RNA sequence: GGGAACGACUCGAGUAGAGUCGAAAAACACUCCAGAAGAGGGAGUCAGAUCUUGUUACGGAUGGUUGUGAGCCACCAUGUGGUUGCUGGGAUUUGAACUCUGGACCAUCGGAAGAGCAGUCGGGUAUGAUAGUACUCGUUUCGACGAGUACUAUCAAAAAGAAACAACAACAACAAC
Reactivity to DMS in 0.01 (KOAc 150mM, MgCl2 10mM, bicine 150mM(pH8.5), 24C), signal-to-noise 7, nucleotides 027 to 126: a070c110a100c060u010c010c030a100g010a120a100g000a120g010g010g010a060g010u000c060a040g010a050u010c030u000u010g010u010u000a080c090g000g010a040u000g010g020u000u000g020u010g010a120g020c060c030a050c030c050a090u010g020u000g010g000u000u000g020c060u000g000g000g010a080u000u000u000g010a070a080c050u010c030u000g010g000a080c060c030a070u000c050g000g000a050a070g000a050g010c050a050g010u000c050g010g010g010u010a120
Reactivity to 2A3 in 0.01 (KOAc 150mM, MgCl2 10mM, bicine 150mM(pH8.5), 24C), signal-to-noise 4, nucleotides 027 to 126: a000c010a020c020u040c020c020a030g050a140a020g040a160g050g030g010a020g020u020c020a030g000a090u000c010u070u120g040u100u090a060c050g060g040a030u030g060g010u100u090g090u090g150a050g080c010c010a020c010c010a080u200g050u090g150g060u070u050g020c040u090g000g000g070a070u070u040u140g050a120a040c030u020c030u070g030g060a050c010c010a040u060c030g010g010a070a020g000a010g040c020a020g030u020c020g020g020g000u080a070
This 177-nucleotide RNA was probed chemically with DMS and 2A3. Conditions: 150 mM KOAc, 10 mM MgCl2 and 150 mM bicine (pH 8.5), 24 C. It was measured as part of the RMDB library OK2TRN. For 2A3, 4,008 sequencing reads were counted.